Background: Structure probing data (DMS and 2A3) for a 177-nucleotide construct. The 2A3 profile rests on 79,110 reads. For DMS the reverse transcriptase was MarathonRT. For DMS, 87,303 sequencing reads were counted. 2A3 adducts were read by reverse transcription with SuperScript II with manganese. Source: RMDB library OK2TRN, as collected in RNAgym. The reactions ran in a buffer of 150 mM KOAc, 10 mM MgCl2 and 150 mM bicine (pH 8.5), at 24 C.
RNA sequence: GGGAACGACUCGAGUAGAGUCGAAAACAGGUGCGUGUUCCACGGCGACAGGCUCGCGCCGCACGUGAUCCACAGGCCGUGCGCGGCCGACGUGUCGACGUUGUGAUACUUGACGAGCUUGAGCGCACGCACUAAUUAAUUUCGAUUAAUUAGUGCGAAAAGAAACAACAACAACAAC
Reactivity to DMS in 0.01 (KOAc 150mM, MgCl2 10mM, bicine 150mM(pH8.5), 24C), signal-to-noise 9, nucleotides 027 to 126: c090a100g010g020u000g000c050g010u000g010u000u000c020c020a080c100g010g000c000g010a070c020a040g010g010c070u000c010g010c080g020c080c010g010c010a020c020g010u000g010a090u000c110c110a090c190a220g000g010c050c010g020u000g020c110g030c020g010g010c000c000g000a030c140g010u000g010u000c050g010a020c020g000u010u010g010u000g010a100u010a080c120u000u000g010a130c050g010a080g010c030u000u000g000a140g010c030g010c040a140
Reactivity to 2A3 in 0.01 (KOAc 150mM, MgCl2 10mM, bicine 150mM(pH8.5), 24C), signal-to-noise 9, nucleotides 027 to 126: c030a030g100g050u070g040c060g020u050g070u060u030c030c020a040c040g060g010c010g010a010c010a020g010g040c040u010c020g020c020g020c030c000g000c000a010c000g030u050g030a100u100c070c020a070c040a100g040g000c020c010g010u030g030c200g000c010g010g000c010c010g020a040c070g060u030g020u040c030g040a040c010g060u160u130g050u070g050a090u120a200c080u110u200g090a110c030g010a010g030c000u040u030g040a080g040c020g000c020a010